Chemical mapping of a 177-nucleotide RNA with DMS and 2A3.
[RMDB]
RNA sequence: GGGAACGACUCGAGUAGAGUCGAAAAGAAAAUAAAGCGCACCUUUAAGGUGGUGCGCAACAAGCGUGACCUAGGAACACGCAUCCACGCGUCUCCUAAGACGCGAAAGGUAUUCCAAAUAAAAAAACUAGAAGUUAAUGUUCGCAUUAACUUCUAGAAAAGAAACAACAACAACAAC
Reactivity to DMS in 0.01 (KOAc 150mM, MgCl2 10mM, bicine 150mM(pH8.5), 24C), signal-to-noise 2, nucleotides 027 to 126: g020a150a100a040a110u000a090a130a170g000c000g000c000a000c020c010u000u000u000a100a220g020g050u000g020g000u000g000c000g000c000a020a030c070a080a050g020c000g000u000g020a090c100c090u000a170g000g010a110a120c030a020c010g000c010a080u000c010c050a150c010g010c000g010u010c000u010c290c210u010a120a080g000a000c010g010c020g000a010a060a100g000g000u000a070u010u000c010c010a100a020a150u090a030a000a100a090a050a030a160
Reactivity to 2A3 in 0.01 (KOAc 150mM, MgCl2 10mM, bicine 150mM(pH8.5), 24C), signal-to-noise 2, nucleotides 027 to 126: g000a000a090a020a010u220a050a060a040g000c000g000c000a010c000c000u080u120u170a130a030g190g020u090g020g010u000g070c000g000c020a000a000c010a010a030g000c000g000u010g020a020c000c100u130a110g100g090a070a020c000a000c020g000c030a030u040c020c000a000c010g020c000g030u000c030u020c030c040u050a100a040g000a010c010g000c000g040a060a030a000g000g000u030a050u040u040c030c010a030a080a010u300a050a090a020a010a000a000a020
Notes:
As a SHAPE reagent, 2A3 marks flexible, mostly unpaired nucleotides at the ribose 2'-OH. DMS adducts were read by reverse transcription with MarathonRT. The data come from the RNA Mapping Database (RMDB), library M2PK90.